[RMDB]
RNA sequence: GGGAACGACUCGAGUAGAGUCGAAAACGCUUUUGUUCCAUGGGUUGCGGGUGUCUUGGCCGGCAUCGUGUUGCUGGUAGGCGAGGAGUGCGAGGCAGUGCCAGGCCGCGUGGGCGAGAUGCGGCAAGAGUAGUACCGUAUUCGUACGGUACUACUCAAAAGAAACAACAACAACAAC
Reactivity to DMS in 0.01 (KOAc 150mM, MgCl2 10mM, bicine 150mM(pH8.5), 24C), signal-to-noise 4, nucleotides 027 to 126: c090g000c100u000u000u010u010g010u000u010c030c030a100u000g010g010g000u000u010g000c080g020g010g020u000g010u000c020u010u010g020g020c050c020g000g000c020a020u000c240g000u010g010u010u000g020c020u000g010g030u000a080g000g010c070g010a090g000g000a070g000u000g010c050g010a060g010g000c050a060g020u010g020c020c050a090g010g010c020c010g010c040g020u000g010g000g010c060g000a090g010a050u000g010c030g010g020c070a120a080
Reactivity to 2A3 in 0.01 (KOAc 150mM, MgCl2 10mM, bicine 150mM(pH8.5), 24C), signal-to-noise 4, nucleotides 027 to 126: c030g020c030u080u090u060u150g070u100u040c020c010a060u090g030g020g040u070u080g060c050g010g040g050u040g020u050c040u050u080g070g000c020c000g040g010c000a030u040c070g080u060g030u100u080g010c030u030g060g010u050a080g030g030c030g010a040g030g010a060g020u070g000c020g000a030g000g080c020a030g030u030g120c010c020a050g010g050c010c030g020c020g000u010g000g030g020c050g020a070g010a040u070g020c000g010g000c040a050a020